About this RNA:
An RNA of 177 nucleotides, treated with DMS and 2A3 and read out base by base. DMS adducts were read by reverse transcription with MarathonRT. Reactivities are rounded to 0.1 and cut off at 0 and 3. For 2A3 the reverse transcriptase was SuperScript II with manganese. The data come from the RNA Mapping Database (RMDB), libraries RFM100 and RFMREP.
RNA sequence: GGGAACGACUCGAGUAGAGUCGAAAAGCGGUGAAGAUGCCGCCUACCCGCAGAAGGACGGAAAGACCCUAUAGACCUUAACUGUAAGCUGUCAUUGUUUCUUCGGUUUUAAUGCUCAGAGUAAGUGCACCCCUGAAGAAUUCGUUCUUCAGGGGUGAAAAGAAACAACAACAACAAC
Reactivity to DMS in 0.01 (KOAc 150mM, MgCl2 10mM, bicine 150mM(pH8.5), 24C), signal-to-noise 2, nucleotides 027 to 126: g010c030g000g010u000g040a170a060g030a180u060g030c000c030g090c000c020u000a080c000c020c020g020c140a070g030a090a070g000g000a110c070g020g000a030a090a050g000a080c060c030c010u050a100u010a040g000a070c030c000u020u000a050a080c030u000g020u040a060a080g000c080u010g010u020c050a190u010u000g030u010u000u000c020u000u000c020g000g020u000u020u020u010a080a110u000g010c050u000c000a060g030a070g010u020a050a040g020u000g010
Reactivity to 2A3 in 0.01 (KOAc 150mM, MgCl2 10mM, bicine 150mM(pH8.5), 24C), signal-to-noise 3, nucleotides 027 to 126: g040c030g000g020u040g080a170a120g100a260u260g000c010c000g000c000c020u040a050c000c000c000g010c000a020g060a040a060g030g000a030c060g020g000a080a010a020g060a060c030c010c000u070a050u060a050g110a050c020c000u050u150a050a060c040u070g020u050a050a040g030c010u020g000u020c020a060u060u110g010u030u050u030c010u000u030c000g000g060u000u000u030u200a030a110u170g000c040u040c070a030g020a000g140u050a170a030g040u080g040